[RMDB]
RNA sequence: GGGAACGACUCGAGUAGAGUCGAAAAGUCUUCUGCUUCGGCAGAAGACAAAAUAAAAACGCGGGCGCAUCACCGCUAUGAUGCGAAGUACAAAAGUACAAAAAAGCUUCGAGUUCGCUCGAAGCAACCAUAAAUUACCGUUCGCGGUAAUUUAUGGAAAAGAAACAACAACAACAAC
Reactivity to 2A3 in 0.01 (KOAc 150mM, MgCl2 10mM, bicine 150mM(pH8.5), 24C), signal-to-noise 3, nucleotides 027 to 126: g010u000c000u000u010c010u000g010c020u030u060c200g110g000c000a000g000a000a000g000a000c000a010a000a010a000u010a000a020a010a000a010c050g010c020g060g030g000c030g010c010a000u000c000a000c020c010g020c230u030a090u040g000a010u000g000c020g020a090a020g000u010a010c050a040a300a080a030g010u000a010c000a010a170a020a030a020a000g010c000u000u000c000g010a010g030u030u140c210g080c090u000c010g000a000a000g000c010a000a000
Reactivity to DMS in 0.01 (KOAc 150mM, MgCl2 10mM, bicine 150mM(pH8.5), 24C), signal-to-noise 2, nucleotides 027 to 126: g010u000c000u000u000c000u000g010c000u000u000c200g030g030c000a010g010a010a000g000a000c000a020a030a020a090u010a040a090a050a130a130c140g000c020g010g000g070c030g010c000a000u000c020a030c040c030g020c170u000a090u000g000a020u000g020c010g000a240a150g020u000a010c010a080a130a060a160g040u000a030c020a010a030a080a060a090a140g000c000u000u000c000g000a030g000u010u000c210g000c000u000c000g000a010a000g000c000a010a010